[RMDB]
This 177-nucleotide RNA was probed chemically with DMS and 2A3. For DMS, 1,188 sequencing reads were counted. It was measured as part of the RMDB library TTRDES.

RNA sequence: GGGAACGACUCGAGUAGAGUCGAAAAGAUAUGGAGAAUGGCAUUGAGCGAUGUGAUCGGAAACGAUCAACUCGCAAUGAUGUGCCCGCUUCUCCUAAGUCAAAACACGAGUCUUCGGACUCGUGAAUCGGAUAUCAAACUUCGGUUUGAUAUCCGAAAAAGAAACAACAACAACAAC
Reactivity to DMS in 0.01 (KOAc 150mM, MgCl2 10mM, bicine 150mM(pH8.5), 24C), signal-to-noise 1, nucleotides 027 to 126: g040a040u010a300u010g000g000a010g040a100a090u030g000g010c000a020u000u000g040a090g000c000g000a030u020g020u000g000a000u010c010g010g000a110a090a040c010g040a020u000c000a030a010c070u010c000g040c010a270a150u010g030a090u000g010u000g010c010c010c140g000c100u000u000c010u000c000c000u000a020a090g000u000c060a140a110a100a180c000a010c000g000a010g020u010c010u000u030c140g050g000a000c000u000c000g050u000g000a020a060
Reactivity to 2A3 in 0.01 (KOAc 150mM, MgCl2 10mM, bicine 150mM(pH8.5), 24C), signal-to-noise 1, nucleotides 027 to 126: g030a010u050a030u100g000g020a010g010a000a060u250g030g040c000a010u030u130g030a020g000c010g040a040u240g020u020g000a000u000c010g020g000a070a050a020c020g000a010u010c010a020a110c010u000c000g000c010a010a210u110g020a030u060g020u010g000c000c040c010g000c070u060u010c000u000c000c000u000a110a000g010u060c070a050a000a150a150c010a000c010g000a020g000u000c030u050u240c300g140g040a000c010u010c020g000u000g000a010a090